[RMDB]
RNA sequence: GGGAACGACUCGAGUAGAGUCGAAAAAGAUUACCAGCCAGAUGACAAGGUAAUUCAAGAGAUAAAUAUCCUGUUUUGUCUUACUAAGAUGCUUCAGAAUAUUCUUAAGAUAGCCGCUUGGUUUUAGCGAUUACCACCUAUUCGUAGGUGGUAAUCGAAAAGAAACAACAACAACAAC
Reactivity to DMS in 0.01 (KOAc 150mM, MgCl2 10mM, bicine 150mM(pH8.5), 24C), signal-to-noise 2, nucleotides 027 to 126: a060g000a120u010u020a140c010c010a080g020c010c020a080g010a150u020g010a130c100a090a100g010g000u000a030a110u000u000c020a040a300g010a010g010a080u000a070a040a020u000a020u000c010c010u000g010u000u000u000u020g020u000c000u000u010a090c220u030a040a010g000a040u000g000c070u000u000c020a020g030a010a050u020a020u000u000c020u000u010a040a260g000a000u000a220g010c070c020g010c060u020u000g010g010u000u000u000u000a120g000
Reactivity to 2A3 in 0.01 (KOAc 150mM, MgCl2 10mM, bicine 150mM(pH8.5), 24C), signal-to-noise 2, nucleotides 027 to 126: a020g030a060u130u090a040c010c010a010g010c050c000a060g040a170u090g070a120c050a100a100g000g020u030a040a030u140u060c010a040a000g020a000g000a040u070a130a200a020u100a050u020c000c010u000g020u000u010u010u040g000u020c000u000u060a290c080u110a050a030g010a030u030g000c010u010u030c010a000g030a050a030u060a040u090u000c000u010u040a060a000g030a050u020a030g040c020c020g040c040u070u050g030g000u000u090u060u200a060g060
The data come from the RNA Mapping Database (RMDB), library OK2TRN. Chemical mapping of a 177-nucleotide RNA with DMS and 2A3. Reactivities are given for positions 27 through 126. The DMS profile rests on 1,387 reads.